This 177-nucleotide RNA was probed chemically with DMS. Reactivities are rounded to 0.1 and cut off at 0 and 3. For DMS the reverse transcriptase was MarathonRT. Source: RMDB library OK2TRN, as collected in RNAgym. Conditions: 150 mM KOAc, 10 mM MgCl2 and 150 mM bicine (pH 8.5), 24 C.
RNA sequence: GGGAACGACUCGAGUAGAGUCGAAAAGGACAGACUUCGUUGCGAUCGCCUAGCUCGAGCCGAGGCGUCAGCCAUAGGGCGCUGAUAGGUAGGGCGAGCAUUCUGUGCCCAAAGGAUAGGGCUGGCAUAUGAACGACGAUUUCGAUCGUCGUUCAUAAAAAGAAACAACAACAACAAC
Reactivity to DMS in 0.01 (KOAc 150mM, MgCl2 10mM, bicine 150mM(pH8.5), 24C), signal-to-noise 2, nucleotides 027 to 126: g010g000a050c040a060g030a080c200u030u010c100g030u000u000g000c100g000a130u010c080g010c000c020u000a090g020c010u010c030g010a130g020c020c000g020a190g020g010c040g030u010c070a050g010c010c030a100u000a030g010g010g010c010g010c060u000g010a110u000a040g010g000u010a140g010g010g020c000g000a040g010c130a140u000u000c020u000g010u010g000c000c000c010a090a150a120g010g000a110u040a100g000g010g010c010u000g010g020c100a180